Structure probing data (DMS and 2A3) for a 177-nucleotide construct. The reactions ran in a buffer of 150 mM KOAc, 10 mM MgCl2 and 150 mM bicine (pH 8.5), at 24 C.

RNA sequence: GGGAACGACUCGAGUAGAGUCGAAAAGAUAUGGAAUCCUUCUCGCUUUUGACGAACCUUCGGAAACGAAGGCUCGAUAAGCGAGAGGAUUCCUAAGUCAAAACCUAGGUUGUUCGCAACCUAGGAAGUUAAAGAUGCUGUUCGCAGCAUCUUUAACAAAAGAAACAACAACAACAAC
Reactivity to DMS in 0.01 (KOAc 150mM, MgCl2 10mM, bicine 150mM(pH8.5), 24C), signal-to-noise 3, nucleotides 027 to 126: g000a020u000a300u000g010g000a010a010u000c000c000u000u010c010u000c000g010c000u010u000u020u000g000a170c170g020a010a020c000c010u000u000c000g010g000a100a070a120c010g030a010a000g000g010c010u000c000g020a090u000a010a030g020c000g000a000g000a040g000g000a000u000u010c000c000u020a000a050g000u000c030a080a030a140a160c010c000u000a000g000g000u010u000g010u000u000c210g000c020a010a010c000c000u000a000g010g000a020a030
Reactivity to 2A3 in 0.01 (KOAc 150mM, MgCl2 10mM, bicine 150mM(pH8.5), 24C), signal-to-noise 3, nucleotides 027 to 126: g000a010u030a030u120g010g000a010a010u010c020c000u150u270c020u000c010g020c020u130u170u100u250g170a110c030g010a010a020c000c000u010u000c000g020g030a070a040a000c010g000a000a000g010g000c010u000c000g010a010u020a090a070g000c010g000a000g010a010g000g000a000u000u000c000c000u000a000a000g010u010c010a010a040a040a060c000c000u000a000g030g000u000u020g040u070u040c300g030c140a000a010c000c000u000a000g010g010a010a030